[RMDB]
RNA sequence: GGGAACGACUCGAGUAGAGUCGAAAACACGUGGUCCAAUGUUGAUCCCUCUAAUCCGGAUCCGGAUAAUGACACAUAUACGCCAUCGGGUGCGACAAUACCCGGUGGCACGGGUGCAUUCCAAUACAGAUACGUCUGGUUUCGACCAGACGUAUCUAAAAGAAACAACAACAACAAC
Reactivity to DMS in 0.01 (KOAc 150mM, MgCl2 10mM, bicine 150mM(pH8.5), 24C), signal-to-noise 2, nucleotides 027 to 126: c000a030c130g000u020g010g010u010c020c040a230a070u000g020u000u020g010a150u000c010c000c000u000c160u010a110a100u010c130c030g040g010a060u020c020c270g020g010a010u010a010a030u030g010a160c030a060c100a070u050a220u020a090c110g000c030c000a030u000c010g000g000g020u010g020c180g020a150c300a160a070u000a020c000c010c020g000g000u000g000g020c000a000c100g000g020g030u000g000c000a100u010u000c080c030a070a070u020a060c150
Reactivity to 2A3 in 0.01 (KOAc 150mM, MgCl2 10mM, bicine 150mM(pH8.5), 24C), signal-to-noise 1, nucleotides 027 to 126: c020a000c010g090u060g010g030u000c010c080a120a030u050g020u050u050g070a150u090c010c040c000u080c030u090a100a070u080c050c060g060g050a120u000c140c110g050g000a020u080a080a030u120g180a010c000a000c010a050u130a060u100a270c060g030c000c000a000u000c000g010g010g030u020g030c050g050a020c030a010a030u030a020c000c020c000g050g010u010g000g000c020a000c030g000g020g000u020g000c020a000u030u000c000c050a030a010u160a180c060